Chemical mapping of a 177-nucleotide RNA with 2A3 and DMS. For DMS the reverse transcriptase was MarathonRT. The data come from the RNA Mapping Database (RMDB), library RFMREP. The 2A3 profile rests on 9,384 reads. For DMS, 7,401 sequencing reads were counted.
RNA sequence: GGGAACGACUCGAGUAGAGUCGAAAAAUGAUGUCAAUUUCCGGUCGACAGAUCUCAGAGCGAGAUACAGUGACCAGGAGUUCACUCUGCCUUGAGCUUCCGUCAGGUGAGCUCGGUGAGAUGGCCUUCCUUAUAGAUACUUCGGUAUCUAUAAGGAAAAAGAAACAACAACAACAAC
Reactivity to 2A3 in 0.01 (KOAc 150mM, MgCl2 10mM, bicine 150mM(pH8.5), 24C), signal-to-noise 6, nucleotides 027 to 126: a000u120g040a050u140g060u150c040a040a040u050u070u000c020c000g000g000u010c030g060a040c030a060g060a030u010c020u010c010a130g060a060g300c090g050a000g030a010u100a150c040a040g020u010g080a010c010c010a020g000g000a010g010u150u210c020a010c010u010c020u030g000c010c000u020u250g010a000g000c010u020u030c010c000g090u130c130a070g000g040u110g060a000g000c000u000c000g000g010u070g020a030g000a030u020g030g010c000c000u010
Reactivity to DMS in 0.01 (KOAc 150mM, MgCl2 10mM, bicine 150mM(pH8.5), 24C), signal-to-noise 6, nucleotides 027 to 126: a090u010g010a100u010g000u000c090a040a080u000u000u010c010c030g010g000u000c020g000a090c200a110g010a040u000c010u000c000a160g020a170g010c250g000a010g000a020u000a050c090a090g000u000g000a010c010c010a070g020g000a030g010u000u010c060a030c060u000c010u000g020c010c000u000u010g020a020g020c010u000u000c010c020g000u010c300a070g020g010u010g010a010g000c010u000c000g010g000u010g000a040g000a070u000g010g010c030c060u000